[RMDB]
RNA sequence: GGGAACGACUCGAGUAGAGUCGAAAAAGCAUGGUACGCCAUGCAAGCCACCACUCACACCCACUGCUGGUGCCCAGCGCUGGUCCAAAUCACUUGGCACUGUCAGUGGAUGUGAGCAGUGGCUGAAGGGUACGGAUAGGUUCGCCUAUCCGUACCCAAAAGAAACAACAACAACAAC
Reactivity to 2A3 in 0.01 (KOAc 150mM, MgCl2 10mM, bicine 150mM(pH8.5), 24C), signal-to-noise 3, nucleotides 027 to 126: a000g010c000a010u010g000g000u080a030c230g030c050c010a020u000g000c000a010a000g000c000c000a000c000c000a030c010u020c000a010c000a000c010c000c000a010c000u010g010c010u020g020g000u000g000c000c000c000a020g000c100g050c120u150g040g090u180c060c050a120a180a070u090c000a020c000u000u010g010g000c020a010c010u000g030u010c000a010g000u000g000g000a000u010g000u000g000a000g000c000a020g000u000g000g000c000u010g010a060a050
Reactivity to DMS in 0.01 (KOAc 150mM, MgCl2 10mM, bicine 150mM(pH8.5), 24C), signal-to-noise 1, nucleotides 027 to 126: a180g020c000a000u010g020g000u010a090c210g010c000c000a000u050g010c000a000a000g000c000c000a030c020c060a300c000u010c030a030c000a070c050c070c000a000c020u000g000c010u000g000g000u000g000c030c000c000a000g000c080g040c050u000g030g000u000c300c300a130a070a120u060c010a120c020u030u000g000g030c000a000c030u000g000u030c060a000g010u000g000g100a010u000g080u040g000a000g000c000a300g010u000g000g030c000u000g000a100a000
This 177-nucleotide RNA was probed chemically with 2A3 and DMS. Values cover nucleotides 27 to 126. The RNA was probed in 150 mM KOAc, 10 mM MgCl2 and 150 mM bicine (pH 8.5) at 24 C. For DMS the reverse transcriptase was MarathonRT. 2A3 adducts were read by reverse transcription with SuperScript II with manganese. It was measured as part of the RMDB library RFM100.